[RMDB]
RNA sequence: GGGAACGACUCGAGUAGAGUCGAAAAAUAACUGGCAAAACUAACACACAACUCGCAGCAGCUUAAUAGCUACUACGGAUCCUAGCAGCCGUCGCCUGGUCGGCUGAUUUCUAGGGUCUCACUUUAAACAGGCUACGCUUGGACCCUUCCGUCUGGAUCGGUAUAAACCGUUCGCGGUUUAUACCGAAAAAGAAACAACAACAACAAC
Reactivity to 2A3 in 0.01 (KOAc 150mM, MgCl2 10mM, bicine 150mM(pH8.5), 24C), signal-to-noise 1, nucleotides 027 to 156: a010u060a000a050c040u030g030g000c000a050a080a090a090c080u110a190a030c050a020c030a050c030a120a110c070u050c100g040c040a040g000c010a000g000c030u040u110a020a040u110a170g020c010u050a040c030u030a010c050g000g020a040u000c000c000u000a000g010c000a000g010c000c000g000u020c040g050c050c080u160g130g040u040c000g000g000c000u000g000a030u040u150u020c010u000a010g000g000g010u010c010u000c010a050c000u100u090u210a060a100a040c030a030g010g000c020u050a030c070g010c020u030u000g020g000a100c000c000c000u030u020c030c000g080u060c010u020g040g010a020